[RMDB]
RNA sequence: GGGAACGACUCGAGUAGAGUCGAAAAAUGGAACCAACCUGUGCUGUGACAUGAGCCCAGUUGAGGAAACAUAUGAGUAGGAUACUAUAUAAAAAAAUUUAUCUUUCUAGGGUACCUUAAAAUGGUGAAUACUGGAACUUGGAUCUGCCAUGUCAUCGAUAAUUCCCUGAUUCGUCAGGGAAUUAUCAAAAGAAACAACAACAACAAC
Reactivity to 2A3 in 0.01 (KOAc 150mM, MgCl2 10mM, bicine 150mM(pH8.5), 24C), signal-to-noise 1, nucleotides 027 to 156: a000u070g030g000a010a010c030c010a000a030c020c020u020g020u040g040c070u050g030u050g050a050c020a000u020g020a020g030c010c010c010a000g000u020u080g010a020g020g070a060a150a000c020a020u130a070u100g030a010g000u120a070g050g000a040u020a070c060u000a070u220a160u300a300a030a030a020a010a030a050u030u130u110a160u040c020u060u100u000c040u030a000g030g020g020u050a040c000c010u010u070a070a000a000a000u100g020g000u020g020a080a010u130a100c020u000g000g030a020a040c000u040u070g060g060a080u130c030u030g020c010c000a020u020g000u000c000a030u080c060
The record gives the reactivity of an RNA of 207 nucleotides to 2A3. The 2A3 profile rests on 458 reads. The reactions ran in a buffer of 150 mM KOAc, 10 mM MgCl2 and 150 mM bicine (pH 8.5), at 24 C.